[RMDB]
RNA sequence: GGGAACGACUCGAGUAGAGUCGAAAACCGAUCCGAGGGGCCCGACGCCCCUGAUCUGGAGAGCACUCCGGCCCGAAGGGUUGAGUAGCACCCAGAGGGAGGAAAUCACACGGAGAGAAACAGACAAGAAGGACGUGGUUCGCCACGUCCAAAAGAAACAACAACAACAAC
Reactivity to DMS in 0.01 (KOAc 150mM, MgCl2 10mM, bicine 150mM(pH8.5), 24C), signal-to-noise 2, nucleotides 027 to 129: c020c040g050a070u020c000c140g070a030g020g040g040g010c000c080c190g050a240c000g010c000c030c040c030u040g010a010u030c030u010g000g010a070g040a080g050c120a070c110u040c000c060g000g060c000c000c000g000a290a260g000g000g000u050u040g040a110g030u030a140g060c080a080c020c080c010a010g000a300g000g010g170a190g040g000a060a090a050u010c060a050c110a090c040g040g030a090g040a000g070a090a050a070c000a050g000a070c090a030a090g040a100a040
Reactivity to 2A3 in 0.01 (KOAc 150mM, MgCl2 10mM, bicine 150mM(pH8.5), 24C), signal-to-noise 3, nucleotides 027 to 129: c000c000g020a050u030c000c000g090a010g000g000g020g030c040c010c060g060a050c120g040c010c000c000c000u000g000a050u010c060u010g000g000a070g020a020g020c040a000c050u000c000c000g170g020c000c000c030g040a040a050g020g050g000u030u020g030a020g060u110a000g020c020a050c060c000c000a000g000a000g060g010g010a000g000g030a020a090a000u140c020a010c000a020c020g040g020a060g030a010g000a080a050a010c010a030g100a000c020a000a000g150a000a040
Overview: Structure probing data (DMS and 2A3) for a 170-nucleotide construct. Values cover nucleotides 27 to 129. For DMS the reverse transcriptase was MarathonRT.